[RMDB]
RNA sequence: GGGAACGACUCGAGUAGAGUCGAAAAAGCGAUGAUACGUCAUCGCAACGAUUGCCUGAUCGUAAAACAGGAGACGGCCGUGGCCGCGACCACGUAAAAAAGCGUAACGUGUUCUACGGACCACGAAAAAAGCGCGGAACGUUCGCGUUCCGCGCAACCUACAAACUACCUUCGGGUAGUUUGUAGGAAAAGAAACAACAACAACAAC
Reactivity to 2A3 in 0.01 (KOAc 150mM, MgCl2 10mM, bicine 150mM(pH8.5), 24C), signal-to-noise 2, nucleotides 027 to 156: a000g000c000g000a010u000g010a010u050a080c270g070u000c000a010u000c010g000c010a010a020c000g000a010u010u020g030c000c020u000g010a020u000c050g080u200a020a000a010a060c030a020g000g030a000g060a100c160g110g010c070c030g000u000g000g010c010c000g010c020g020a010c000c020a000c010g030u090a000a020a020a040a010a000g080c040g020u020a090a040c010g000u000g010u030u000c040u110a050c110g060g010a070c010c060a000c000g040a120a000a040a060a050a010g000c000g020c010g020g000a010a000c000g030u100u110c180g030c000g110u000u000c000c000g000c000g020c000a000a000
Structure probing data (2A3) for a 207-nucleotide construct.
For 2A3, 1,345 sequencing reads were counted.
The RNA was probed in 150 mM KOAc, 10 mM MgCl2 and 150 mM bicine (pH 8.5) at 24 C.
For 2A3 the reverse transcriptase was SuperScript II with manganese.